[RMDB]
RNA sequence: GGGAACGACUCGAGUAGAGUCGAAAAAACAAGGACGGUGGGGAGUGCCCAGCGGCUCGACAGGAGUAAUCCCCGCCGAAACAGGGUUUUCACCCUUCCUUUCUUCGGGUGUCCUUCCUCGCGCCCGCAACAGUACGAAGUUCGCUUCGUACUGUUGAAAAGAAACAACAACAACAAC
Reactivity to 2A3 in 0.01 (KOAc 150mM, MgCl2 10mM, bicine 150mM(pH8.5), 24C), signal-to-noise 2, nucleotides 027 to 126: a000a000c020a000a000g010g010a000c000g020g010u010g010g000g000g000a010g030u050g010c000c000c020a010g030c040g160g030c100u070c110g160a120c070a050g040g080a150g050u050a010a040u030c020c000c010c000g020c000c010g030a010a000a010c070a020g090g000g020u120u090u230u300c170a080c000c010c010u000u020c020c020u030u030u070c040u040u050c020g010g050g020u010g030u040c000c110u070u050c000c000u010c000g000c010g010c030c000c000g000
Reactivity to DMS in 0.01 (KOAc 150mM, MgCl2 10mM, bicine 150mM(pH8.5), 24C), signal-to-noise 1, nucleotides 027 to 126: a080a040c120a060a030g010g000a050c010g020g020u000g010g000g000g010a050g010u000g000c020c010c010a090g030c050g010g020c100u000c040g010a100c110a050g010g010a100g000u000a040a070u010c040c010c010c010g010c000c010g000a010a030a040c140a020g010g010g000u010u000u010u010c170a050c000c000c000u000u000c010c000u000u000u000c020u000u010c010g000g000g010u000g000u000c000c070u010u000c000c000u000c140g010c080g000c000c010c000g000
Structure probing data (2A3 and DMS) for a 177-nucleotide construct. For 2A3 the reverse transcriptase was SuperScript II with manganese. The 2A3 profile rests on 1,582 reads. For DMS, 2,041 sequencing reads were counted. Source: RMDB library VIROID, as collected in RNAgym. DMS (dimethyl sulfate) methylates the pairing face of unpaired adenines and cytosines.